[RMDB]
RNA sequence: GGGAACGACUCGAGUAGAGUCGAAAACAGACCUGGCUAAAGAGGUUAGUACUGAAGUACAAGCACAGACAGUACUUAUAGAUGGUAGAGACCAAGAUGCGUAUAGCAAAUUCUGCCAGCUUAACAAUGCUGUCUACUUUUCACCACAGAAACCUAAAAUCUCGGCAAAAUUCGUUUUGCCGAGAUUAAAAGAAACAACAACAACAAC
Reactivity to 2A3 in 0.01 (KOAc 150mM, MgCl2 10mM, bicine 150mM(pH8.5), 24C), signal-to-noise 2, nucleotides 027 to 156: c050a020g070a060c000c010u050g100g000c050u160a110a080a050g100a050g080g000u050u050a020g040u070a060c040u080g090a120a040g030u070a050c070a080a000g090c060a040c020a150g010a000c000a000g010u000a000c020u010u000a110u100a090g030a040u000g000g000u020a000g000a000g040a070c010c090a130a030g070a200u090g000c020g040u160a070u230a300g020c000a000a020a060u120u020c000u000g010c000c000a000g000c010u000u000a020a000c010a020a030u010g000c000u000g010u010c000u020a010c000u020u060u010u070c050a060c080c020a020c020a040g030a090a060a020c040c070u180a220a180
Chemical mapping of a 207-nucleotide RNA with 2A3. The data come from the RNA Mapping Database (RMDB), library OK3TST. For 2A3, 834 sequencing reads were counted. The RNA was probed in 150 mM KOAc, 10 mM MgCl2 and 150 mM bicine (pH 8.5) at 24 C.